[RMDB]
RNA sequence: GGGAACGACUCGAGUAGAGUCGAAAAUUGGAUCGUUGAAUCCAUCGUGAAGACAGCCCCGCACCUUGUGUGAGAUUGCACUGGCAGGACGGACACUAGGAGCGUGUACCAACCACCAGGUGAGCUACAUCGUUGUUCGGUUCGCCGAACAACGAUGAAAAGAAACAACAACAACAAC
Reactivity to 2A3 in 0.01 (KOAc 150mM, MgCl2 10mM, bicine 150mM(pH8.5), 24C), signal-to-noise 3, nucleotides 027 to 126: u100u030g020g020a000u000c080g230u140u200g120a220a000u010c000c020a000u030c070g100u050g100a050a010g070a010c060a060g080c030c000c000c000g000c020a050c020c060u160u200g060u010g040u020g150a060g020a190u020u150g030c050a080c120u020g060g000c070a130g090g030a020c060g050g000a030c020a000c050u060a060g230g000a120g000c020g000u000g020u100a300c000c020a040a040c000c010a040c000c000a030g000g070u050g040a030g020c010u020a000
Reactivity to DMS in 0.01 (KOAc 150mM, MgCl2 10mM, bicine 150mM(pH8.5), 24C), signal-to-noise 2, nucleotides 027 to 126: u000u000g000g000a090u000c030g020u010u000g080a100a000u000c020c020a010u000c170g030u000g000a130a080g000a030c140a060g000c030c050c060c100g000c000a000c150c070u010u000g000u000g050u070g000a020g000a200u020u000g000c020a170c020u000g000g080c000a280g000g000a030c270g080g080a050c000a100c000u000a060g040g030a120g010c250g000u030g000u000a010c000c040a010a300c000c000a180c050c040a070g000g010u010g010a180g000c050u000a170

Source information:
The record gives the reactivity of an RNA of 177 nucleotides to 2A3 and DMS. For DMS, 1,456 sequencing reads were counted. The 2A3 profile rests on 1,148 reads. DMS (dimethyl sulfate) methylates the pairing face of unpaired adenines and cytosines.